[RMDB]
RNA sequence: GGGAACGACUCGAGUAGAGUCGAAAAAUUUUCUGACAAAGCAUAUUAAUCUUGCCUGGAAAGAUGCGAAAUCCUUUCUGCUUGAAGUUUAUUCACAGCAGUUAGAAAACACGCCAUAUACGCGCUAUGAACGAUCUACAUUCGUGUAGAUCGUUCAAAAAGAAACAACAACAACAAC
Reactivity to DMS in 0.01 (KOAc 150mM, MgCl2 10mM, bicine 150mM(pH8.5), 24C), signal-to-noise 1, nucleotides 027 to 126: a220u020u000u020u000c010u010g010a080c140a060a060a100g010c060a060u020a150u000u000a050a080u010c070u000u000g000c070c040u010g020g050a020a070a050g000a030u000g050c000g010a080a120a090u000c120c010u000u000u000c000u000g000c000u000u000g010a000a000g000u050u000u000a100u020u010c000a000c300a020g000c020a020g030u000u000a040g020a030a040a020a070c150a150c050g000c020c100a070u000a150u020a010c070g000c050g010c110u000a100
Reactivity to 2A3 in 0.01 (KOAc 150mM, MgCl2 10mM, bicine 150mM(pH8.5), 24C), signal-to-noise 1, nucleotides 027 to 126: a000u120u050u080u040c000u000g060a060c030a090a180a000g000c000a060u120a030u260u190a170a080u190c060u040u060g050c000c000u040g060g030a140a060a040g000a050u030g050c000g100a070a070a070u110c060c000u000u000u000c000u000g010c010u000u040g020a020a020g090u100u300u300a120u190u000c020a040c050a060g000c040a000g000u000u020a010g030a000a110a040a020c010a000c050g000c030c030a150u070a020u010a120c070g060c010g040c190u110a110

The data come from the RNA Mapping Database (RMDB), library OK2TST. This 177-nucleotide RNA was probed chemically with DMS and 2A3. For DMS, 671 sequencing reads were counted. Values cover nucleotides 27 to 126. Values are in units of 0.01, from 0 to 300, in steps of 10. For 2A3, 512 sequencing reads were counted. For 2A3 the reverse transcriptase was SuperScript II with manganese.